An RNA of 177 nucleotides, treated with DMS and 2A3 and read out base by base. Values cover nucleotides 27 to 126. DMS adducts were read by reverse transcription with MarathonRT. The reactions ran in a buffer of 150 mM KOAc, 10 mM MgCl2 and 150 mM bicine (pH 8.5), at 24 C.
RNA sequence: GGGAACGACUCGAGUAGAGUCGAAAAACGUGGAGAUAAAGUGGCACCAGUUCGCGGGCGGUCCGCCGGUGAACGAGGCCUUCGCCUCGGGCGCUCUCGACAUUGCCGCGCUGGGCGACACGCCCUCCGCAUCCUAGCGAUUCGUCGCUAGGAUGCGAAAAGAAACAACAACAACAAC
Reactivity to DMS in 0.01 (KOAc 150mM, MgCl2 10mM, bicine 150mM(pH8.5), 24C), signal-to-noise 2, nucleotides 027 to 126: a100c100g020u030g030g000a080g000a040u000a030a120a180g010u020g000g030c010a130c060c000a090g000u040u010c070g020c000g000g000g040c000g000g010u000c090c220g000c230c160g000g000u010g000a020a060c010g020a030g000g060c010c170u010u100c210g000c040c000u010c020g000g000g000c000g000c000u000c140u000c300g020a040c050a020u000u070g000c000c010g010c030g000c020u000g000g000g010c110g000a070c070a000c030g000c030c100c000u000c060
Reactivity to 2A3 in 0.01 (KOAc 150mM, MgCl2 10mM, bicine 150mM(pH8.5), 24C), signal-to-noise 3, nucleotides 027 to 126: a010c040g020u030g070g080a080g050a110u180a170a230a030g100u070g120g000c050a090c180c080a010g080u200u160c040g000c030g000g120g000c040g000g040u010c050c020g020c030c050g060g010u020g000a010a010c000g000a030g040g000c020c000u090u050c140g030c000c010u000c000g000g000g000c030g000c020u060c000u020c020g020a040c040a100u040u190g030c000c000g010c020g050c030u030g020g040g000c010g010a010c020a030c040g070c000c000c000u010c030